[RMDB]
This 207-nucleotide RNA was probed chemically with DMS and 2A3. The RNA was probed in 150 mM KOAc, 10 mM MgCl2 and 150 mM bicine (pH 8.5) at 24 C.
RNA sequence: GGGAACGACUCGAGUAGAGUCGAAAAGUUCGGGAAUCGAAAAUCCCAGCAUAUGUUCGAAAUUACCGAAGGAAAGUCGCGACUGAUUGAUUUGCGUUACUAAGUGGCGGGGAAAAUGUGAACCGUUUUCCUGCUUGUUCUGAUUUAUUUUAGUGUAACUACUCCUAUCGUUCGCGAUAGGAGUAGUAAAAGAAACAACAACAACAAC
Reactivity to DMS in 0.01 (KOAc 150mM, MgCl2 10mM, bicine 150mM(pH8.5), 24C), signal-to-noise 2, nucleotides 027 to 156: g010u010u000c030g040g030g000a060a130u000c030g000a070a090a130a110u010c060c050c070a160g020c100a160u000a080u000g000u010u000c020g020a110a040a080u010u010a060c030c040g010a210a110g000g020a070a080a070g020u000c020g030c000g030a300c060u000g030a110u010u000g000a120u010u000u000g000c030g020u000u000a110c060u010a070a090g000u000g020g030c040g000g010g030g010a020a010a020a030u010g000u010g010a080a210c140c010g030u010u000u000u000c020c000u020g010c080u010u000g010u000u000c060u000g020a180u000u000u000a080u040u010u000u000a160g000u000g000u000a120
Reactivity to 2A3 in 0.01 (KOAc 150mM, MgCl2 10mM, bicine 150mM(pH8.5), 24C), signal-to-noise 3, nucleotides 027 to 156: g010u020u070c040g010g050g090a020a040u080c020g010a050a020a040a070u000c070c030c040a040g000c040a060u230a100u250g080u100u030c020g020a050a040a060u120u050a090c000c010g020a050a010g040g040a150a040a050g030u050c010g030c020g030a110c130u100g080a220u190u070g010a060u010u100u180g000c020g020u060u020a020c000u040a060a100g060u070g080g110c080g000g000g000g050a010a040a010a030u080g050u100g070a050a050c070c020g000u010u010u000u020c030c000u010g050c010u010u090g020u060u070c020u050g070a130u050u120u070a130u100u150u100u220a100g020u130g110u300a040